[RMDB]
RNA sequence: GGGAACGACUCGAGUAGAGUCGAAAACGUGAACAUCGCUCUGCUAAGUCCCGUCGUUCUUCCAGUCAGAGCGAGAUUGUAAGCAACCUUAUGCGCAAUGAAGACAUAGAGGGACUUCUUUAUCAAGAAAUAUAGCUACCUUCGGGUAGCUAUAUUUAAAAGAAACAACAACAACAAC
Reactivity to DMS in 0.01 (KOAc 150mM, MgCl2 10mM, bicine 150mM(pH8.5), 24C), signal-to-noise 4, nucleotides 027 to 126: c120g010u020g000a090a120c150a100u000c000g010c010u010c010u010g000c130u010a080a060g010u000c050c030c010g010u000c040g000u000u000c010u010u020c050c060a120g000u010c010a020g000a030g000c000g000a040g000a030u010u010g010u010a140a120g000c060a080a120c150c060u010u010a080u010g000c020g010c020a060a050u020g010a100a090g010a080c090a060u010a060g010a050g020g000g010a060c050u000u010c040u020u000u010a090u010c130a100a150g010
Reactivity to 2A3 in 0.01 (KOAc 150mM, MgCl2 10mM, bicine 150mM(pH8.5), 24C), signal-to-noise 3, nucleotides 027 to 126: c010g080u080g070a070a040c040a050u030c000g010c010u010c010u020g020c020u060a080a000g000u010c040c000c000g120u070c030g010u020u040c000u150u030c030c000a030g060u040c010a040g010a000g000c040g020a000g000a000u050u080g010u080a110a110g010c020a020a100c070c010u130u150a010u110g020c030g000c020a030a060u070g030a070a110g060a020c010a090u170a050g100a030g030g010g040a010c010u070u070c020u010u130u120a190u170c090a130a100g040
Structure probing data (DMS and 2A3) for a 177-nucleotide construct.
The 2A3 profile rests on 1,155 reads.
Source: RMDB library OK1LIB, as collected in RNAgym.
DMS (dimethyl sulfate) methylates the pairing face of unpaired adenines and cytosines.
The RNA was probed in 150 mM KOAc, 10 mM MgCl2 and 150 mM bicine (pH 8.5) at 24 C.